[RMDB]
RNA sequence: GGGAACGACUCGAGUAGAGUCGAAAAUGUCCCUGGCUCCCGUGUUGCCUGCAUCUGAUGUUCCCUAACUGAAACCUGCCUCAUGUUCCUCCCUGGGCCGAUGGGCAGUUUCAGAGGACAGAGCUGUCACCUAUACUUGCUUCGGCAAGUAUAGGUGAAAAGAAACAACAACAACAAC
Reactivity to DMS in 0.01 (KOAc 150mM, MgCl2 10mM, bicine 150mM(pH8.5), 24C), signal-to-noise 2, nucleotides 027 to 126: u080g000u010c010c000c000u030g000g000c010u010c010c040c050g040u000g030u000u000g010c010c070u060g020c000a090u010c040u000g020a130u040g020u020u000c030c000c000u060a190a090c070u000g030a040a040a030c130c060u010g010c020c020u010c090a140u000g010u000u010c010c030u010c080c060c180u030g010g000g000c060c040g000a040u010g000g000g000c020a020g000u000u000u000c020a000g030a140g000g050a090c060a090g000a070g010c090u010g000u010
Reactivity to 2A3 in 0.01 (KOAc 150mM, MgCl2 10mM, bicine 150mM(pH8.5), 24C), signal-to-noise 3, nucleotides 027 to 126: u130g040u020c000c020c000u000g040g010c000u000c000c000c020g060u030g070u060u120g040c010c010u020g020c010a090u020c040u100g070a080u120g030u030u010c020c000c000u020a140a080c000u000g020a050a030a030c040c050u010g000c010c020u160c050a030u100g040u050u070c010c010u070c000c040c010u070g000g020g030c000c030g080a050u080g000g000g000c000a010g000u000u010u000c010a010g020a020g010g000a020c040a050g060a030g040c030u050g030u090

Source: RMDB libraries RFM100 and RFMREP, as collected in RNAgym. Structure probing data (DMS and 2A3) for a 177-nucleotide construct. Values are in units of 0.01, from 0 to 300, in steps of 10. Conditions: 150 mM KOAc, 10 mM MgCl2 and 150 mM bicine (pH 8.5), 24 C. For 2A3, 2,424 sequencing reads were counted.